[RMDB]
RNA sequence: GGGAACGACUCGAGUAGAGUCGAAAACUCACAGACCUGGGCAACACGCCGCAGAACCUGUACAUGACGCGCGGCGACCCGCCCAUGGUGAACGGGGACGCGGACGGCUUCGUGCGCGACAGCGUCAACGCCGGGAGCCGCAUCCGGCCGCAGGGCCCCCUCUAGAUUAUUUCGAUAAUCUAGAGGGAAAAGAAACAACAACAACAAC
Reactivity to 2A3 in 0.01 (KOAc 150mM, MgCl2 10mM, bicine 150mM(pH8.5), 24C), signal-to-noise 2, nucleotides 027 to 156: c030u030c000a030c020a020g150a030c000c010u010g000g000g020c000a090a040c040a020c090g020c020c000g000c010a010g060a110a100c020c030u120g040u180a110c090a180u140g060a060c020g040c000g000c000g060g000c000g030a050c020c010c010g010c000c010c010a030u110g000g020u020g040a060a030c040g010g000g020g040a010c040g020c030g050g010a010c000g010g000c000u070u060c040g120u120g040c060g020c000g150a090c080a070g060c060g040u040c060a050a020c010g000c000c010g030g010g020a000g000c000c000g020c030a050u050c020c010g020g010c010c020g040c050a030g060g060g000c000c000
Reactivity to DMS in 0.01 (KOAc 150mM, MgCl2 10mM, bicine 150mM(pH8.5), 24C), signal-to-noise 1, nucleotides 027 to 156: c050u010c050a130c060a080g050a050c000c000u010g010g040g070c010a110a040c160a300c030g010c030c000g120c010a150g000a140a050c050c010u020g030u000a160c190a090u010g010a080c010g010c030g100c000g010g030c000g000a100c090c030c030g040c000c010c020a010u010g000g000u000g000a100a090c020g020g000g000g010a100c030g030c020g000g030a080c030g000g040c050u000u010c000g030u010g010c030g000c020g030a190c130a230g050c190g040u000c030a050a030c030g000c010c020g050g020g000a080g000c000c030g000c060a230u000c010c000g010g030c030c010g030c080a140g010g020g030c000c030
The data come from the RNA Mapping Database (RMDB), library OK3TST. Chemical mapping of a 207-nucleotide RNA with 2A3 and DMS. The RNA was probed in 150 mM KOAc, 10 mM MgCl2 and 150 mM bicine (pH 8.5) at 24 C.